[RMDB]
The record gives the reactivity of an RNA of 177 nucleotides to DMS.
The DMS profile rests on 1,078 reads.
DMS adducts were read by reverse transcription with MarathonRT.
RNA sequence: GGGAACGACUCGAGUAGAGUCGAAAACGUAAGACCUGGAUUGGGCUGCUCCGAUGUAAGUCGGUGAUACUCCGGUAGCCAAGGAUCUUCCUUGGCGAGCACGGUGAGAAUCGGCCCCCAGGGUGAGGUACCCGGUAAUGUUCGCAUUACCGGGUACAAAAGAAACAACAACAACAAC
Reactivity to DMS in 0.01 (KOAc 150mM, MgCl2 10mM, bicine 150mM(pH8.5), 24C), signal-to-noise 1, nucleotides 027 to 126: c090g030u000a120a170g000a080c000c020u000g010g010a260u010u000g020g000g000c010u000g000c080u000c000c000g020a010u000g000u020a030a200g000u010c010g010g000u000g000a140u000a260c170u000c000c000g000g030u020a170g000c010c000a010a010g000g010a180u010c270u010u010c000c010u010u000g010g010c030g000a050g020c030a200c010g000g000u000g000a060g000a130a070u000c040g000g030c000c020c000c000c000a000g000g000g000u000g000a070g000